An RNA of 177 nucleotides, treated with DMS and 2A3 and read out base by base.
[RMDB]
RNA sequence: GGGAACGACUCGAGUAGAGUCGAAAAAUUCGUGUACGCACAGCACGAAGGUACGAUGCGCACUGACUCUCGCUCGCUUUGACGUAUACAUGUACACGACGAUGUAUGUGUCAAAUGUACAUCUCAAAUGACUCACGGUAUUCGUACCGUGAGUCAUAAAAGAAACAACAACAACAAC
Reactivity to DMS in 0.01 (KOAc 150mM, MgCl2 10mM, bicine 150mM(pH8.5), 24C), signal-to-noise 3, nucleotides 027 to 126: a140u000u000c010g020u000g030u000a120c100g020c090a060c190a200g000c010a030c040g010a070a040g000g050u000a080c060g000a140u010g020c050g010c150a070c080u010g000a060c040u000c000u000c070g010c020u000c040g010c140u000u000u000g010a060c010g020u000a020u020a020c040a000u000g020u000a060c140a090c160g000a190c140g010a050u000g010u000a010u000g010u010g000u000c030a020a030a030u000g000u000a070c070a080u000c020u000c020a060a090
Reactivity to 2A3 in 0.01 (KOAc 150mM, MgCl2 10mM, bicine 150mM(pH8.5), 24C), signal-to-noise 2, nucleotides 027 to 126: a020u010u030c030g000u010g000u050a040c100g030c070a040c040a090g000c000a010c060g020a040a020g040g040u040a030c060g040a100u140g060c010g000c020a040c090u030g030a020c000u020c000u030c060g000c020u010c030g020c030u020u010u010g020a010c030g020u030a000u000a030c010a010u000g070u140a040c140a040c120g130a030c120g010a010u000g010u000a010u000g040u010g030u010c040a060a000a000u080g000u010a030c020a090u010c020u010c020a110a130
The 2A3 profile rests on 3,332 reads. Conditions: 150 mM KOAc, 10 mM MgCl2 and 150 mM bicine (pH 8.5), 24 C. For 2A3 the reverse transcriptase was SuperScript II with manganese.